Source: RMDB library M2PK50, as collected in RNAgym. This 177-nucleotide RNA was probed chemically with 2A3 and DMS. The 2A3 profile rests on 3,320 reads. Values cover nucleotides 27 to 126. 2A3 adducts were read by reverse transcription with SuperScript II with manganese.
RNA sequence: GGGAACGACUCGAGUAGAGUCGAAAAUCAUGGUGGUUCGCCACCAUGAACUGUCUAGUCGCUAGAAAACGAUCAAAACUAGCGACUAGACUAACGAUGGAACUGGGGGACAGUUCGCUGUCCCCAAACUAGUCUCCAAGUUCGCUUGGAGACUAGUAAAAGAAACAACAACAACAAC
Reactivity to 2A3 in 0.01 (KOAc 150mM, MgCl2 10mM, bicine 150mM(pH8.5), 24C), signal-to-noise 3, nucleotides 027 to 126: u030c000a000u000g010g010u010g000g120u030u030c200g060c050c000a010c010c000a000u000g000a000a040c010u000g000u000c000u000a000g000u000c010g020c020u000a000g070a100a230a020a020c140g170a230u230c110a040a060a020a100c000u010a010g020c000g000a000c000u000a000g000a000c010u000a000a000c010g090a060u140g080g100a090a070c110u170g080g000g000g010g030a000c000a010g010u040u060c130g030c060u000g000u000c000c000c000c000a000a000
Reactivity to DMS in 0.01 (KOAc 150mM, MgCl2 10mM, bicine 150mM(pH8.5), 24C), signal-to-noise 4, nucleotides 027 to 126: u010c000a000u000g010g020u010g010g000u010u010c270g060c010c000a010c000c000a000u000g010a020a110c170u000g010u000c000u000a000g020u000c000g020c000u000a000g000a080a040a130a130c160g010a160u010c200a060a070a140a120c000u000a000g000c010g000a010c000u000a000g000a000c000u010a040a050c150g000a140u020g010g010a100a080c130u000g010g000g000g000g010a010c010a020g000u000u020c190g010c010u000g010u000c000c000c000c000a000a000